[RMDB]
RNA sequence: GGGAACGACUCGAGUAGAGUCGAAAAUAUGCGCCAUACAUAUGAAGUGGAUAGCUGCAUAGGGAGUGGGACAGAAAUGAUAUUUUCGCAAAAUAUAUUUCGUCGUCCCACCCCAACUUGCAUUGUCCCAUACCAUCCAGUUCGCUGGAUGGUAUGGAAAAGAAACAACAACAACAAC
Reactivity to 2A3 in 0.01 (KOAc 150mM, MgCl2 10mM, bicine 150mM(pH8.5), 24C), signal-to-noise 4, nucleotides 027 to 126: u100a020u030g050c040g020c020c020a030u060a090c040a010u240a110u270g140a210a060g040u030g040g000a040u070a110g060c090u060g030c040a030u060a070g010g000g010a230g010u010g000g010g000a000c010a020g040a010a030a000u180g170a020u030a000u030u020u030u090c030g000c130a020a020a030a000u000a010u010a020u010u010u000c060g100u040c070g000u010c080c000c000a000c000c000c000c000a000a020c020u020u060g010c020a050u020u130g060u050c010
Reactivity to DMS in 0.01 (KOAc 150mM, MgCl2 10mM, bicine 150mM(pH8.5), 24C), signal-to-noise 5, nucleotides 027 to 126: u000a010u000g000c040g030c050c060a060u010a110c040a070u000a080u010g000a130a160g020u010g000g000a030u000a040g030c110u000g020c010a010u000a150g010g000g010a060g040u010g000g010g010a020c010a170g000a000a020a000u000g010a020u000a000u000u000u000u010c300g000c290a130a030a020a010u000a010u000a040u000u000u000c010g000u010c220g010u000c000c000c000a000c010c000c000c000a020a040c170u010u000g010c060a060u010u000g000u000c070

Conditions: 150 mM KOAc, 10 mM MgCl2 and 150 mM bicine (pH 8.5), 24 C.
This 177-nucleotide RNA was probed chemically with 2A3 and DMS.
For DMS the reverse transcriptase was MarathonRT.
In probing experiments dimethyl sulfate is read out at A N1 and C N3, which are open when not base-paired.
It was measured as part of the RMDB library OK2TRN.
The 2A3 profile rests on 5,321 reads.